Structure probing data (2A3) for a 177-nucleotide construct. The RNA was probed in 150 mM KOAc, 10 mM MgCl2 and 150 mM bicine (pH 8.5) at 24 C.

[RMDB]
RNA sequence: GGGAACGACUCGAGUAGAGUCGAAAACGACUUAAUUACAGAGUUUUCAGAAGAUAAUUAUCCAUCUAACAAAAAUUACGAAAUAACUCUUCGUCAAAUGUCUAUUCUAACGCACGUUAACAAUGUGUCUACCGAGUUUCUUCGGAAACUCGGUAGAAAAAGAAACAACAACAACAAC
Reactivity to 2A3 in 0.01 (KOAc 150mM, MgCl2 10mM, bicine 150mM(pH8.5), 24C), signal-to-noise 3, nucleotides 027 to 126: c030g020a000c000u140u080a000a210u090u030a080c060a020g030a040g040u010u000u010u130c060a080g030a120a010g000a090u040a030a170u260u220a050u090c040c030a020u020c040u160a110a170c110a110a030a080a020a080u150u080a060c070g010a000a000a060u110a070a020c020u000c000u050u090c130g090u040c070a030a040a130u050g050u070c040u050a170u130u000c020u050a110a060c020g020c030a000c050g070u070u110a090a040c100a130a140u260g020u000g020
Source information: Values cover nucleotides 27 to 126. For 2A3, 773 sequencing reads were counted.